[RMDB]
RNA sequence: GGGAACGACUCGAGUAGAGUCGAAAAAGCAUGGGUUCAGUGACGCGUCGUUCUACACCUGGCGCGCGAAGUUCGGCGGCAUGGAAGUCUCGGAAGCCCGCCGGCUCAAGGACCUCGAGGUGGAGAACUAAAAUGGACGUUUCGACGUCCAUUUUAGAAAAGAAACAACAACAACAAC
Reactivity to DMS in 0.01 (KOAc 150mM, MgCl2 10mM, bicine 150mM(pH8.5), 24C), signal-to-noise 3, nucleotides 027 to 126: a090g010c100a090u020g010g010g010u000u000c020a100g000u000g020a140c030g030c030g010u000c030g030u000u010c050u010a090c070a080c030c050u000g010g020c030g010c030g010c040g010a100a050g020u000u010c020g010g000c010g000g010c090a160u000g010g010a100a120g020u000c070u010c060g010g010a120a180g020c180c010c020g020c070c010g000g020c020u000c090a110a150g000g010a030c060c010u010c120g010a040g000g020u000g000g010a080g020a090a180
Reactivity to 2A3 in 0.01 (KOAc 150mM, MgCl2 10mM, bicine 150mM(pH8.5), 24C), signal-to-noise 2, nucleotides 027 to 126: a000g130c050a090u170g010g010g000u060u030c030a040g040u070g210a110c000g000c000g000u070c000g030u170u000c030u040a060c030a030c000c010u040g030g000c000g020c000g000c000g020a010a000g020u120u250c010g000g000c020g000g000c030a010u080g070g110a130a100g130u000c040u050c090g070g100a090a030g050c020c000c000g050c010c000g000g030c000u010c010a030a100g070g000a040c000c010u040c120g030a020g020g010u010g000g060a130g000a030a030